[RMDB]
Conditions: 150 mM KOAc, 10 mM MgCl2 and 150 mM bicine (pH 8.5), 24 C. Structure probing data (2A3 and DMS) for a 207-nucleotide construct. 2A3 is a SHAPE reagent: it acylates the 2'-hydroxyl of flexible nucleotides of all four kinds. For DMS, 3,774 sequencing reads were counted.
RNA sequence: GGGAACGACUCGAGUAGAGUCGAAAAGCGUCUGUUGCGGUAUCACCGUCGACGUAAUCGAUUGUGAAGUCAAGAACUCCAUCACCAGAGAGGUCAUCAAACUGUGAGUCAACCCAUCCUCCGCCGUUAUUCAGAUGUUGGACCGCAAGCUCAUAUGCAUAUUCUGCAGUUUCGACUGCAGAAUAUGAAAAGAAACAACAACAACAAC
Reactivity to 2A3 in 0.01 (KOAc 150mM, MgCl2 10mM, bicine 150mM(pH8.5), 24C), signal-to-noise 4, nucleotides 027 to 156: g010c020g020u050c060u100g110u190u140g030c020g010g040u090a100u210c070a020c040c010g020u010c000g000a010c020g040u070a010a110u040c020g040a040u080u040g060u060g110a080a050g070u110c070a110a060g020a070a040c010u020c030c000a090u100c040a090c080c020a010g080a010g010a010g130g000u040c030a060u030c050a100a090a050c030u030g040u100g170a000g020u010c010a020a070c010c020c010a030u050c000c030u040c030c020g030c010c000g030u030u050a060u110u090c050a040g010a040u040g060u050u050g030g020a030c000c030g010c060a040a010g010c010u040c060a070u150a090u260g040
Reactivity to DMS in 0.01 (KOAc 150mM, MgCl2 10mM, bicine 150mM(pH8.5), 24C), signal-to-noise 2, nucleotides 027 to 156: g090c040g000u010c010u020g020u010u010g040c010g020g030u010a150u010c080a080c020c040g000u000c010g030a040c040g010u000a040a300u010c030g000a040u000u000g020u010g000a020a050g010u010c050a130a150g030a080a160c040u000c060c070a080u020c060a060c020c030a160g010a200g020a140g010g010u010c020a060u010c080a100a070a120c030u010g010u020g030a140g010u000c060a100a240c020c030c000a130u000c010c010u000c040c040g010c010c040g010u010u010a060u000u000c030a050g000a090u010g030u000u010g020g000a050c000c030g000c010a070a090g020c020u000c020a070u000a110u000g030

The 2A3 profile rests on 2,671 reads.